[RMDB]
Structure probing data (2A3 and DMS) for a 177-nucleotide construct. DMS adducts were read by reverse transcription with MarathonRT.
RNA sequence: GGGAACGACUCGAGUAGAGUCGAAAAAACACUUCCAAGGAUAUGAGCAUGUCUUGUCCCUGCCUUUGGGCCACCCAUGCACACCAGCUCCACAGCAGCUGAAGCAGAGCAGAUCCAGAGGAGGCUGCAGUCAGCAUGAUUUCGAUCAUGCUGACUGAAAAGAAACAACAACAACAAC
Reactivity to 2A3 in 0.01 (KOAc 150mM, MgCl2 10mM, bicine 150mM(pH8.5), 24C), signal-to-noise 1, nucleotides 027 to 126: a000a010c040a030c000u030u020c030c010a050a010g070g000a020u040a050u200g080a060g040c030a010u040g050u050c030u040u050g040u050c010c010c050u060g120c030c040u160u190u060g010g000g020c000c000a030c010c020c000a050u030g030c100a030c010a010c080c000a010g010c020u040c020c070a160c020a040g120c050a000g020c040u030g020a090a000g000c030a010g040a010g020c030a010g000a070u040c000c000a010g040a020g070g020a010g020g050c030u080g000
Reactivity to DMS in 0.01 (KOAc 150mM, MgCl2 10mM, bicine 150mM(pH8.5), 24C), signal-to-noise 3, nucleotides 027 to 126: a070a050c120a090c120u000u000c010c020a090a240g010g030a060u000a060u000g010a120g000c040a060u010g010u010c050u010u000g020u000c040c000c010u000g020c100c030u000u000u000g020g000g010c040c050a080c040c010c030a040u000g020c020a130c070a150c130c020a060g000c020u010c020c080a110c180a110g040c120a030g000c010u000g000a130a060g040c050a050g000a110g000c030a060g000a100u010c030c030a090g020a160g010g000a110g020g010c050u000g000